[RMDB]
RNA sequence: GGGAACGACUCGAGUAGAGUCGAAAACGCUGGGAAAUGGUGGUUCGUGUACAGGGAGCUGAAGCGCGCACGGCGAAGAACUGUAUAACGAACGCAUUUCCUGUGCUGAAGCGCGCACGGCAACCGAAAGGUGCGGACUCACCAGUUCGCUGGUGAAUUAACCCAUUGGAUUCGUCCAAUGGGUUAAAAAAGAAACAACAACAACAAC
Reactivity to 2A3 in 0.01 (KOAc 150mM, MgCl2 10mM, bicine 150mM(pH8.5), 24C), signal-to-noise 4, nucleotides 027 to 156: c010g030c030u050g000g000g110a010a010a010u100g160g130u090g070g060u180u050c000g000u000g010u000a010c010a000g010g000g040a010g010c020u020g060a260a040g010c010g000c000g000c010a040c040g020g000c020g070a090a030g010a050a020c010u010g030u020a010u030a160a090c070g010a010a010c040g000c020a000u000u000u010c000c010u010g020u010g000c000u030g010a180a060g000c020g000c010g000c000a010c000g010g000c020a040a010c030c010g060a110a070a060g050g010u050g010c010g000g050a050c050u040c060a010c020c000a000g010u080u060c170g040c200u000g010g010u010g020a010a000
Reactivity to DMS in 0.01 (KOAc 150mM, MgCl2 10mM, bicine 150mM(pH8.5), 24C), signal-to-noise 2, nucleotides 027 to 156: c000g050c050u010g020g010g020a030a040a020u010g010g050u000g090g030u020u010c010g040u020g020u000a040c010a230g010g000g010a260g030c010u000g030a060a090g010c030g010c020g020c020a300c000g000g000c010g020a070a110g020a070a140c070u000g020u020a020u010a090a090c120g010a050a050c040g010c020a020u000u000u000c010c010u000g030u000g020c020u000g000a100a090g010c020g040c010g020c010a300c030g010g030c020a070a220c020c030g000a040a140a170g000g000u000g020c020g000g010a150c100u000c000a030c010c000a030g000u010u000c160g050c020u000g000g010u020g000a070a210